An RNA of 177 nucleotides, treated with DMS and read out base by base. Source: RMDB library TTRINS, as collected in RNAgym.
[RMDB]
RNA sequence: GGGAACGACUCGAGUAGAGUCGAAAAGAUAUGGAAUCCACACUCCAGCCUGUAGGGACAUGCCACACAAUCGGAAACGAUUGUUUGGCAACAGCCCUCACAGGCUGGAGUGUGGAUUCCUAAGUCACUAUUGGUAAGAGUUCGCUCUUACCAAUAGAAAAGAAACAACAACAACAAC
Reactivity to DMS in 0.01 (KOAc 150mM, MgCl2 10mM, bicine 150mM(pH8.5), 24C), signal-to-noise 2, nucleotides 027 to 126: g020a060u010a300u000g000g000a040a000u000c020c000a000c010a010c000u000c000c000a010g010c000c000u000g000u000a010g000g010g000a020c070a300u000g000c010c000a000c030a010c000a000a010u000c000g020g010a170a110a240c010g010a020u000u000g010u000u000u000g000g000c000a000a030c240a140g000c020c000c000u000c170a010c010a020g000g000c000u000g000g000a000g000u000g000u000g010g010a000u000u000c000c000u010a000a070g010u000c030a300

For DMS the reverse transcriptase was MarathonRT.